[RMDB]
RNA sequence: GGGAACGACUCGAGUAGAGUCGAAAAGGUAAUUCUAGAGCUAAUACAUGCUAAAAACCUCGACUUCGGAAGGGGUGUAUUUAUUAGAUAAAAAACCAAUGCCCUUCGGGGCUCCUUGGUGAUUCAUCUUGAGUUAUGAUUUCGAUCAUAACUCAAGAAAAGAAACAACAACAACAAC
Reactivity to DMS in 0.01 (KOAc 150mM, MgCl2 10mM, bicine 150mM(pH8.5), 24C), signal-to-noise 2, nucleotides 027 to 126: g000g040u010a050a080u020u020c130u010a080g010a140g020c030u010a030a020u000a030c070a020u010g020c060u030a050a080a090a180a060c000c000u000c000g010a300c020u000u040c170g020g000a020a300g000g000g010g010u000g000u020a000u000u000u000a000u010u010a020g020a070u030a000a080a090a050a060a030c000c000a020a110u020g020c000c000c020u000u050c200g000g000g000g000c000u010c050c080u010u020g000g010u020g000a060u010u010c060a060u000
Reactivity to 2A3 in 0.01 (KOAc 150mM, MgCl2 10mM, bicine 150mM(pH8.5), 24C), signal-to-noise 3, nucleotides 027 to 126: g010g000u070a060a120u140u060c050u070a090g020a050g120c000u000a010a010u000a040c030a020u040g050c040u110a110a090a050a090a120c000c000u000c000g030a040c020u080u060c240g120g020a030a010g010g000g010g040u010g010u000a020u000u030u000a030u010u020a000g040a040u220a060a110a020a010a010a000c000c000a010a000u080g000c000c000c000u000u030c140g000g010g000g020c000u000c020c010u000u010g000g020u030g050a090u050u010c010a010u000